[RMDB]
This 177-nucleotide RNA was probed chemically with 2A3 and DMS. For DMS, 3,867 sequencing reads were counted. Source: RMDB library 15KREP, as collected in RNAgym. For 2A3, 3,362 sequencing reads were counted. Conditions: 150 mM KOAc, 10 mM MgCl2 and 150 mM bicine (pH 8.5), 24 C.
RNA sequence: GGGAACGACUCGAGUAGAGUCGAAAAGCAAGAAGCUAUUUUGAUGUCUGAAGACGUUAAGUUAAACCCUUCAGAAGAUUUUAUAAAGCACGUCCGCACUAAUGGUGGUUACAAUUCUUGGCAUUUACUUCCAUAAAUACUUCGGUAUUUAUGGAAGAAAAGAAACAACAACAACAAC
Reactivity to 2A3 in 0.01 (KOAc 150mM, MgCl2 10mM, bicine 150mM(pH8.5), 24C), signal-to-noise 3, nucleotides 027 to 126: g030c010a010a020g050a040a000g000c020u050a170u080u110u030u070g030a040u060g010u020c020u040g010a020a020g020a030c060g000u020u070a030a040g010u010u140a050a080a040c020c010c000u010u020c020a010g010a050a010g000a030u050u100u030u040a150u040a060a060a010g010c020a010c030g040u000c020c010g030c010a020c080u040a060a040u120g070g010u030g010g010u020u030a060c020a020a060u030u020c010u020u020g020g040c020a020u020u070u040a090
Reactivity to DMS in 0.01 (KOAc 150mM, MgCl2 10mM, bicine 150mM(pH8.5), 24C), signal-to-noise 4, nucleotides 027 to 126: g010c050a050a060g010a050a090g010c030u000a090u000u000u010u000g010a050u010g000u010c000u000g010a030a010g010a060c200g010u000u000a080a180g020u010u010a090a050a040c020c050c000u000u000c020a020g000a060a060g000a070u010u010u000u000a060u010a070a080a070g000c020a110c110g000u000c020c050g040c050a050c100u010a070a080u000g010g010u000g000g010u010u000a030c090a080a230u000u000c030u000u000g000g010c110a100u000u000u010a100